[RMDB]
Chemical mapping of a 177-nucleotide RNA with DMS and 2A3. Values cover nucleotides 27 to 126. 2A3 adducts were read by reverse transcription with SuperScript II with manganese. For 2A3, 53,962 sequencing reads were counted. For DMS, 8,409 sequencing reads were counted. Conditions: 150 mM KOAc, 10 mM MgCl2 and 150 mM bicine (pH 8.5), 24 C.
RNA sequence: GGGAACGACUCGAGUAGAGUCGAAAAAUAAAUAAAUCACGCACUUUUCCGGUGGUCCGGACCCAGACCACCGUCACUCCAUUCAGCUUCUUCGGAACCUGUUCGGAGGAAUUAAAUGGGCACCCAAGGAUGAUUACCUGUUCGCGGGUAGUCGUCCAAAAGAAACAACAACAACAAC
Reactivity to DMS in 0.01 (KOAc 150mM, MgCl2 10mM, bicine 150mM(pH8.5), 24C), signal-to-noise 2, nucleotides 027 to 126: a080u040a080a050a060u040a060a070a100u020c030a120c060g010c070a090c050u020u000u000u020c070c010g000g000u000g020g000u010c000c010g000g000a160c000c000c000a090g000a010c000c000a000c000c000g010u010c080a150c020u000c000c000a060u010u010c000a010g020c220u000u000c000u010u050c180g030g000a000a010c170c000u000g000u000u000c080g000g000a010g000g000a030a000u010u010a000a040a010u020g010g000g130c030a210c080c040c050a120a090
Reactivity to 2A3 in 0.01 (KOAc 150mM, MgCl2 10mM, bicine 150mM(pH8.5), 24C), signal-to-noise 9, nucleotides 027 to 126: a000u150a010a050a020u170a050a080a080u170c070a060c120g090c020a090c120u090u090u110u090c060c000g000g000u000g000g010u000c000c010g050g210a300c010c000c000a000g000a000c000c000a000c000c000g010u010c020a010c000u000c000c000a030u050u030c000a000g010c030u000u000c000u020u090c150g110g000a010a010c010c000u020g020u100u040c050g010g000a000g010g010a000a010u080u040a020a020a030u050g000g000g000c010a040c010c020c010a080a040